[RMDB]
Conditions: 150 mM KOAc, 10 mM MgCl2 and 150 mM bicine (pH 8.5), 24 C. An RNA of 177 nucleotides, treated with DMS and read out base by base. DMS adducts were read by reverse transcription with MarathonRT. Values are in units of 0.01, from 0 to 300, in steps of 10. Values cover nucleotides 27 to 126.
RNA sequence: GGGAACGACUCGAGUAGAGUCGAAAAGAUAUGGAACAAAGCAAGAGCGCUCACUGAUUGCGAAGAACGAGCUCGGAAACGAGCUCGGGAGCAAUCGUGAGCGCUUGAUGACCUUUGUUCCUAAGUCCAUAAACCGAUUCUUCGGAAUCGGUUUAUGAAAAGAAACAACAACAACAAC
Reactivity to DMS in 0.01 (KOAc 150mM, MgCl2 10mM, bicine 150mM(pH8.5), 24C), signal-to-noise 2, nucleotides 027 to 126: g010a160u000a300u000g010g010a010a010c010a000a000a030g000c040a100a150g000a000g020c000g050c010u000c010a010c000u070g000a030u020u000g000c010g000a100a160g000a120a240c030g000a010g030c010u000c000g040g010a090a120a220c020g020a030g020c000u000c000g000g040g020a110g030c000a000a000u000c000g000u000g000a000g010c000g000c000u000u000g000a030u020g020a110c300c010u000u000u000g000u000u000c000c000u000a050a070g000u020c040